Structure probing data (2A3) for a 207-nucleotide construct.
Conditions: 150 mM KOAc, 10 mM MgCl2 and 150 mM bicine (pH 8.5), 24 C.
Source: RMDB library RSTRND, as collected in RNAgym.
[RMDB]
RNA sequence: GGGAACGACUCGAGUAGAGUCGAAAAAAGCAGCGUAGGGCAUACCGAGGGUCAGAGCACCUCGUAAAUCCAACUGAAAAACUUUAGUCGCAAACGACGAAAACUACGCCCUGGCCGCUUAAGGUCCAGGACUCACACUAGCCUGUUCAUGGGCUAGCGAGGUUGUAUGGUUCGCCAUACAACCUCGAAAAGAAACAACAACAACAAC
Reactivity to 2A3 in 0.01 (KOAc 150mM, MgCl2 10mM, bicine 150mM(pH8.5), 24C), signal-to-noise 2, nucleotides 027 to 156: a010a010g030c020a010g060c010g050u030a020g030g040g010c000a020u090a070c040c010g000a020g030g000g020u040c020a010g010a010g050c040a000c000c000u020c040g090u070a000a040a040u010c020c000a050a000c080u070g050a160a010a000a010a010c060u180u180u080a060g000u000c030g060c190a210a140a160c010g040a000c010g010a020a030a060a060c070u090a040c060g000c000c000c000u000g000g000c010c000g020c090u160u110a130a060g000g000u070c000c000a010g000g020a040c050u090c030a020c000a020c040u020a000g010c010c000u080g070u250u080c140a160u300g000g020g040c000u000a000g000